[RMDB]
The record gives the reactivity of an RNA of 207 nucleotides to DMS and 2A3. Reactivities are given for positions 27 through 156. For 2A3 the reverse transcriptase was SuperScript II with manganese. Conditions: 150 mM KOAc, 10 mM MgCl2 and 150 mM bicine (pH 8.5), 24 C.
RNA sequence: GGGAACGACUCGAGUAGAGUCGAAAAGGUGCUCUGAAUGGAGUGCUCUACUGAGAUUAUAAAAUAGAAGGUAAGCUAUUAUCUCUUACAACAGGGCAGGGCUUGUUGGAGUAGGCGGUAAAGUCUAAAAACUACCUCACCUUCGGGUGAGGUAGAAGUUUGUUUUAAACUUCGGUUUAAAACAAACAAAAGAAACAACAACAACAAC
Reactivity to DMS in 0.01 (KOAc 150mM, MgCl2 10mM, bicine 150mM(pH8.5), 24C), signal-to-noise 1, nucleotides 027 to 156: g000g010u010g020c000u010c010u010g040a170a130u010g000g000a050g020u000g010c030u010c010u000a080c030u000g010a100g030a110u010u020a140u000a050a070a100a090u000a130g010a190a160g000g020u000a060a050g030c120u000a060u000u000a050u000c020u000c020u030u000a110c030a020a190c060a100g030g020g000c040a130g000g030g050c050u030u010g020u010u020g000g010a160g040u000a030g030g000c020g000g010u000a040a030a130g020u000c030u030a060a090a070a140a130c000u000a010c000c010u000c010a000c000c030u000u010c300g060g030g010u000g000a000g050g030u000a000g000a010a050
Reactivity to 2A3 in 0.01 (KOAc 150mM, MgCl2 10mM, bicine 150mM(pH8.5), 24C), signal-to-noise 3, nucleotides 027 to 156: g050g020u040g000c000u010c010u090g170a170a090u180g000g030a020g020u030g000c010u040c050u070a050c040u090g010a010g010a070u080u080a100u300a240a070a090a030u130a080g030a120a030g090g000u120a070a020g020c010u040a080u210u020a040u200c020u010c000u020u090a070c020a150a020c000a050g020g020g030c020a010g000g000g040c030u040u040g020u000u020g030g000a030g030u050a010g010g040c040g040g010u070a050a080a030g010u000c030u060a080a030a030a000a000c000u000a000c000c000u000c000a010c000c000u040u050c140g130g000g000u000g000a000g000g000u000a000g000a000a000